[RMDB]
Chemical mapping of a 177-nucleotide RNA with DMS. Source: RMDB library VIROID, as collected in RNAgym. Reactivities are given for positions 27 through 126. The DMS profile rests on 606 reads. The reactions ran in a buffer of 150 mM KOAc, 10 mM MgCl2 and 150 mM bicine (pH 8.5), at 24 C.
RNA sequence: GGGAACGACUCGAGUAGAGUCGAAAAGUUCCGAACAAGGAUCCGCGGGAGAGCAGAUCAGCGCCCGAGAGGGGUAAGUCGGUAAAGAGCAUUGGAACGUCAGAGAUACAACUCCCAAGAAGGAAAACCCAUUAAAGGAGUUCGCUCCUUUAAUGGGAAAAGAAACAACAACAACAAC
Reactivity to DMS in 0.01 (KOAc 150mM, MgCl2 10mM, bicine 150mM(pH8.5), 24C), signal-to-noise 1, nucleotides 027 to 126: g000u000u010c010c000g010a110a050c150a140a120g000g000a120u020c020c050g010c090g030g000g010a070g020a210g030c040a070g010a130u000c020a200g000c030g040c050c020c000g030a080g000a130g010g000g040g000u010a010a050g030u000c090g000g010u000a090a000a060g010a090g010c060a030u010u000g000g000a040a010c070g010u000c060a050g010a150g000a090u000a040c100a040a060c080u020c000c030c040a120a140g020a180a110g030g000a070a090a150a080